An RNA of 177 nucleotides, treated with 2A3 and DMS and read out base by base. DMS adducts were read by reverse transcription with MarathonRT. For DMS, 5,418 sequencing reads were counted.
[RMDB]
RNA sequence: GGGAACGACUCGAGUAGAGUCGAAAAAGAAAUAGCGAUUCUCCAAGGAGUUGAGUCCUUCGAGGAUUGCUAAGCAAAGAUGCAGAACUAUCAAUGAACGACUUUGCUCAUCUUUGUAUACAAAAAAGAUUUAAAGUUAGUUCGCUAACUUUAAAUCAAAAGAAACAACAACAACAAC
Reactivity to 2A3 in 0.01 (KOAc 150mM, MgCl2 10mM, bicine 150mM(pH8.5), 24C), signal-to-noise 5, nucleotides 027 to 126: a020g070a000a080a020u050a000g000c000g010a000u000u010c000u000c020c010a000a000g000g010a010g030u200u190g140a080g160u010c000c000u030u000c010g000a000g000g000a000u000u000g000c000u010a030a010g000c000a000a000a010g010a000u030g000c100a000g030a100a070c050u070a080u200c050a110a170u230g060a130a040c080g070a050c110u110u130u110g010c010u020c010a020u000c000u000u050u000g040u040a150u040a140c090a010a150a010a040a000a020
Reactivity to DMS in 0.01 (KOAc 150mM, MgCl2 10mM, bicine 150mM(pH8.5), 24C), signal-to-noise 6, nucleotides 027 to 126: a070g010a120a120a110u000a010g020c010g010a000u000u000c000u000c000c090a010a010g010g010a040g010u010u010g010a250g010u000c010c010u000u000c300g000a010g010g000a010u000u000g010c000u000a020a100g010c020a010a020a020g000a020u000g000c190a020g000a040a070c110u000a070u010c040a100a150u020g010a180a120c190g010a040c080u000u000u000g010c030u000c050a020u000c000u000u000u000g010u000a090u000a070c130a000a020a080a070a080a070